RNA sequence: GGGAACGACUCGAGUAGAGUCGAAAAAGAGGCAAGGCCACAGAAUGACUCCACAUAGCAGAGGUGUUGCUACGAGAGGUGACACUGUCCCUGUCAGAAACAAGUCAGUGCCAAGGAGACUCAAUAACAAAAACAACUAAACAAUCCUUUCCUGCCAUCGUGGUAAAUCAUUCGUGAUUUACCACGAAAAAGAAACAACAACAACAAC
Reactivity to DMS in 0.01 (KOAc 150mM, MgCl2 10mM, bicine 150mM(pH8.5), 24C), signal-to-noise 2, nucleotides 027 to 156: a050g000a090g010g010c010a070a060g010g030c000c030a110c030a130g000a080a250u000g000a130c010u000c040c030a140c090a080u010a040g020c050a080g010a300g040g040u000g020u000u000g010c050u010a150c080g000a160g020a150g060g060u000g000a030c010a050c030u000g020u000c150c010c000u030g000u000c040a160g010a120a120a090c100a050a070g000u000c020a040g030u000g020c010c010a100a090g020g000a150g010a090c020u020c040a060a110u000a050a180c030a040a050a050a080a030c080a060a070c110u000a000a060a130c070a080a090u000c020c020u000u010u000c000c000u000g020c090c060a160
Reactivity to 2A3 in 0.01 (KOAc 150mM, MgCl2 10mM, bicine 150mM(pH8.5), 24C), signal-to-noise 6, nucleotides 027 to 156: a000g080a050g010g010c050a040a060g030g020c040c020a040c030a030g130a100a080u080g010a040c020u020c040c020a040c030a120u130a020g020c040a010g030a050g080g010u050g010u020u030g000c010u020a050c070g070a030g000a050g160g020u040g020a010c020a000c050u080g050u090c020c020c010u020g020u060c040a030g090a080a070a040c040a080a030g020u050c030a010g030u010g100c020c000a020a010g040g000a020g020a030c020u040c060a040a140u140a110a070c090a060a070a060a010a020c040a010a030c040u130a080a070a020c030a030a070u110c010c000u030u030u020c000c010u020g040c030c020a050
Record summary:
Chemical mapping of a 207-nucleotide RNA with DMS and 2A3. For 2A3, 4,014 sequencing reads were counted. Reactivities are given for positions 27 through 156. For DMS the reverse transcriptase was MarathonRT. The DMS profile rests on 2,974 reads. The data come from the RNA Mapping Database (RMDB), library OK3TST.